Overview
This 177-nucleotide RNA was probed chemically with 2A3 and DMS. Conditions: 150 mM KOAc, 10 mM MgCl2 and 150 mM bicine (pH 8.5), 24 C. For 2A3, 6,333 sequencing reads were counted.
[RMDB]
RNA sequence: GGGAACGACUCGAGUAGAGUCGAAAACAUCGAGCCGGUGGACCUCGGGCCGGUGAAGAUCUCCCCGCUCGACUUCCUGAGGAAGAUCCUCCCCGAUCCUGCGGAGCUCGGGCCUCGUACCAAGGGGCUUAAUCAGGAUGUUCGCAUCCUGAUUAAGAAAAGAAACAACAACAACAAC
Reactivity to 2A3 in 0.01 (KOAc 150mM, MgCl2 10mM, bicine 150mM(pH8.5), 24C), signal-to-noise 3, nucleotides 027 to 126: c040a050u040c010g010a010g030c000c010g030g020u050g030g060a080c010c010u000c030g000g060g000c020c000g010g000u040g010a040a020g010a020u000c010u040c040c010c000c040g020c010u030c030g040a060c030u130u060c040c030u060g050a050g070g030a020a020g040a070u100c000c020u050c030c030c000c010g000a020u030c000c010u060g000c020g030g010a020g000c020u010c000g020g000g020c030c010u040c030g050u030a050c010c040a070a060g000g000g000g000
Reactivity to DMS in 0.01 (KOAc 150mM, MgCl2 10mM, bicine 150mM(pH8.5), 24C), signal-to-noise 7, nucleotides 027 to 126: c150a050u000c020g000a300g010c010c030g010g030u000g000g000a140c040c020u000c050g010g000g010c090c020g000g010u000g010a070a130g000a040u000c070u000c020c010c000c290g010c040u010c040g010a070c060u000u010c010c010u010g000a080g020g010a090a060g010a070u000c040c040u000c010c020c010c040g010a100u000c020c010u000g010c150g000g000a080g000c140u000c030g010g010g000c010c150u000c050g010u000a100c060c080a100a110g010g000g010g000
The DMS profile rests on 10,174 reads. DMS adducts were read by reverse transcription with MarathonRT.